[RMDB]
RNA sequence: GGGAACGACUCGAGUAGAGUCGAAAAUACACAUUUUGAUACAACCGUAGACGGCGUCUCGUUUCAAAGACCGUGUGGUUGUCUAUCAGUAUAUACUCAUUGUGUUUUUCAAAAAAUCUCUGGGUUGAGAUCGAAAUGUUUUCGAACAUUUCGAUCUAAAAGAAACAACAACAACAAC
Reactivity to 2A3 in 0.01 (KOAc 150mM, MgCl2 10mM, bicine 150mM(pH8.5), 24C), signal-to-noise 4, nucleotides 027 to 126: u140a000c000a000c010a050u050u140u160u160g010a000u020a020c000a010a000c000c000g070u080a050g050a270c020g050g080c050g120u010c020u000c070g190u050u280u160c120a090a060a020g030a070c000c020g000u050g040u050g030g000u000u000g000u000c020u000a000u000c000a010g130u000a060u040a010u020a190c090u080c110a090u050u020g010u000g010u040u010u000u020u100c080a100a090a030a020a030a040u020c050u020c000u050g150g000g020u040u050g110
Reactivity to DMS in 0.01 (KOAc 150mM, MgCl2 10mM, bicine 150mM(pH8.5), 24C), signal-to-noise 3, nucleotides 027 to 126: u010a020c010a050c050a050u010u010u020u020g000a020u000a050c020a000a020c000c030g010u020a120g010a050c010g000g000c110g030u010c050u020c100g000u030u040u020c210a110a110a050g000a080c010c000g000u000g000u000g010g010u000u000g010u010c140u020a020u020c010a020g030u050a070u010a100u030a030c120u010c090a030u000u020g010u010g010u000u000u010u010u030c120a000a070a100a050a040a050u000c000u000c010u000g010g000g010u010u000g020